[RMDB]
RNA sequence: GGGAACGACUCGAGUAGAGUCGAAAAGCUUCCUCUUGGCGCGGAGGUUUAACUGCGCUCGCUCCCCAUAUCGGUGUGGGCGCACCGGUUUUACAAAUUAAAGUCCUUUAGGGAGCGGAAAGGGACAAAAACUUGCACGUGUUCGCACGUGCAAGAAUCAGGACAAUAACUUCGGUUAUUGUCCUGAAAAAGAAACAACAACAACAAC
Reactivity to DMS in 0.01 (KOAc 150mM, MgCl2 10mM, bicine 150mM(pH8.5), 24C), signal-to-noise 2, nucleotides 027 to 156: g000c100u000u000c010c000u000c030u000u000g000g000c020g110c020g020g000a180g040g010u000u000u000a090a160c040u000g030c010g010c000u000c020g030c000u000c010c000c000c050a250u000a050u000c020g010g030u000g030u000g010g040g030c050g010c010a000c010c000g010g000u000u010u000u010a130c140a040a050a110u000u000a040a070a120g000u000c010c020u020u010u000a050g010g000g020a030g040c020g000g020a040a030a050g010g000g030a070c070a090a040a080a160a160c000u010u000g000c000a010c010g030u000g010u010u000c300g000c000a000c010g000u000g010c000a010a000g000a040a060
Reactivity to 2A3 in 0.01 (KOAc 150mM, MgCl2 10mM, bicine 150mM(pH8.5), 24C), signal-to-noise 2, nucleotides 027 to 156: g050c060u130u030c010c000u010c000u010u020g010g000c010g000c010g010g010a010g050g010u070u160u100a020a020c050u110g010c010g010c000u000c000g000c000u000c000c010c000c010a040u040a050u070c010g010g010u000g000u020g000g040g000c010g000c010a000c000c010g000g110u010u030u110u070a120c150a030a040a000u150u260a100a120a020g000u010c000c020u010u010u050a000g010g000g000a010g000c020g000g000a020a000a010g050g010g060a040c070a060a090a010a030a060c000u000u000g000c000a000c000g000u000g000u080u070c130g040c060a000c000g000u000g000c010a000a000g000a000a000